[RMDB]
Background: This 177-nucleotide RNA was probed chemically with 2A3 and DMS. Conditions: 150 mM KOAc, 10 mM MgCl2 and 150 mM bicine (pH 8.5), 24 C. The data come from the RNA Mapping Database (RMDB), library TTRDEL. 2A3 adducts were read by reverse transcription with SuperScript II with manganese. The DMS profile rests on 14,961 reads.
RNA sequence: GGGAACGACUCGAGUAGAGUCGAAAAGAUAUGGAGUGUCCAAGAGGCACAACUAUUCGGAAACGAACGAAUUGUGCUCCCCACCUUGUGACACUCCUAAGUCAAAACUGUCUCUUCGGAGACAGAAGUAUUAGAGUAAGUUCGCUUACUCUAAUACAAAAGAAACAACAACAACAAC
Reactivity to 2A3 in 0.01 (KOAc 150mM, MgCl2 10mM, bicine 150mM(pH8.5), 24C), signal-to-noise 7, nucleotides 027 to 126: g020a000u040a040u140g000g010a000g010u000g000u000c000c000a010a000g010a020g030g000c020a000c010a020a020c060u110a080u070u060c020g030g000a080a060a050c030g020a030a000c030g070a300a300u020u010g000u010g000c000u090c030c010c010c000a030c000c000u020u020g110u270g030a000c000a000c000u000c000c000u010a040a010g030u010c020a010a020a150a200c000u000g010u000c000u010c000u010u060c300g180g000a000g000a010c000a000g000a020a020
Reactivity to DMS in 0.01 (KOAc 150mM, MgCl2 10mM, bicine 150mM(pH8.5), 24C), signal-to-noise 9, nucleotides 027 to 126: g010a040u010a300u000g000g000a020g020u000g000u000c000c000a020a010g010a120g020g010c000a010c000a010a010c090u010a260u000u010c000g010g000a100a100a160c020g010a020a030c110g010a040a090u000u000g000u000g000c020u000c060c010c000c020a300c080c010u010u000g000u010g000a010c000a010c000u000c000c000u000a000a060g010u000c020a070a080a090a120c010u000g000u000c000u000c000u000u010c210g020g000a010g000a010c000a000g000a030a070